The record gives the reactivity of an RNA of 177 nucleotides to 2A3 and DMS. The reactions ran in a buffer of 150 mM KOAc, 10 mM MgCl2 and 150 mM bicine (pH 8.5), at 24 C. The 2A3 profile rests on 13,565 reads.
RNA sequence: GGGAACGACUCGAGUAGAGUCGAAAAGAUAUGGAGCCAUGGACAUGCUGGAUAAGGGUCGGAAACGACCCGUAACAGCAACAGCCCGCUGGCUCCUAAGUCAAAGCCUCGCGUUCGCGCGAGGCAACCACUAAUAUUUGUUCGCAAAUAUUAGUGGAAAAGAAACAACAACAACAAC
Reactivity to 2A3 in 0.01 (KOAc 150mM, MgCl2 10mM, bicine 150mM(pH8.5), 24C), signal-to-noise 3, nucleotides 027 to 126: g030a020u080a060u170g000g000a010g000c020c040a040u130g020g010a050c050a100u100g010c000u010g010g010a010u010a020a030g010g000g010u000c000g030g010a120a070a060c010g000a000c010c010c000g000u000a000a000c000a000g020c000a010a010c000a010g020c000c000c000g040c060u000g000g010c000u000c000c000u000a040a010g030u000c030a040a100a040g000c010c010u000c010g000c010g040u050u090c300g010c000g000c010g120a000g000g000c000a000a000
Reactivity to DMS in 0.01 (KOAc 150mM, MgCl2 10mM, bicine 150mM(pH8.5), 24C), signal-to-noise 5, nucleotides 027 to 126: g000a040u000a300u010g000g010a010g020c000c010a040u010g020g010a020c030a260u000g010c000u000g010g010a130u010a100a170g000g010g010u000c000g000g000a100a100a210c010g010a010c000c010c000g000u000a070a230c010a000g000c010a020a060c180a090g030c000c000c010g010c220u000g010g010c000u000c000c000u000a000a030g000u000c030a100a140a120g000c000c000u000c000g000c000g010u000u010c240g000c010g030c000g000a010g010g010c000a000a040